[RMDB]
RNA sequence: GGGAACGACUCGAGUAGAGUCGAAAAUGCCUACCUCACUUUAGCAAAGCAUACCAUCAGCUCAGACUAUGUCAUCCCCAUAGGGACCUAUGGCCAAAUGAAAAAUGGAUCAACACCCAUGUUUAACGACAUCAAUAUUUAUGACCUCUUUGUCUGACCCACCUAUAUGAUUCGUCAUAUAGGUGGGAAAAGAAACAACAACAACAAC
Reactivity to 2A3 in 0.01 (KOAc 150mM, MgCl2 10mM, bicine 150mM(pH8.5), 24C), signal-to-noise 7, nucleotides 027 to 156: u070g030c000c000u030a060c020c020u090c030a090c050u110u110u180a040g030c040a060a050a010g040c020a050u050a130c040c020a050u060c020a020g030c030u030c030a020g020a100c030u060a040u120g040u020c030a070u070c040c000c000c010a040u100a060g030g030g040a050c030c030u050a060u070g040g000c010c030a040a090a060u150g100a050a040a030a030a030u050g030g000a060u070c040a010a060c000a040c050c020c010a020u050g070u030u130u080a060a040c040g040a010c030a040u100c060a070a090u070a150u180u220u090a100u110g010a020c000c000u060c040u060u100u140g040u020c020u020g040a030
Reactivity to DMS in 0.01 (KOAc 150mM, MgCl2 10mM, bicine 150mM(pH8.5), 24C), signal-to-noise 2, nucleotides 027 to 156: u020g000c010c000u000a110c080c020u000c080a110c040u010u010u000a050g020c020a090a080a140g040c020a140u010a110c080c030a070u010c070a090g030c050u000c030a050g010a180c070u010a050u020g020u010c040a120u000c020c030c000c040a100u000a130g030g000g040a030c030c000u000a050u000g020g050c000c010a060a050a110u010g000a000a030a040a050a060u010g010g040a070u000c060a070a140c150a150c120c010c000a070u010g000u010u010u000a060a150c100g010a040c010a060u000c050a060a120u010a070u000u000u010a090u040g000a080c010c040u010c050u010u000u000g030u000c010u000g020a300
Chemical mapping of a 207-nucleotide RNA with 2A3 and DMS. The reactions ran in a buffer of 150 mM KOAc, 10 mM MgCl2 and 150 mM bicine (pH 8.5), at 24 C. 2A3 is a SHAPE reagent: it acylates the 2'-hydroxyl of flexible nucleotides of all four kinds. The 2A3 profile rests on 4,908 reads.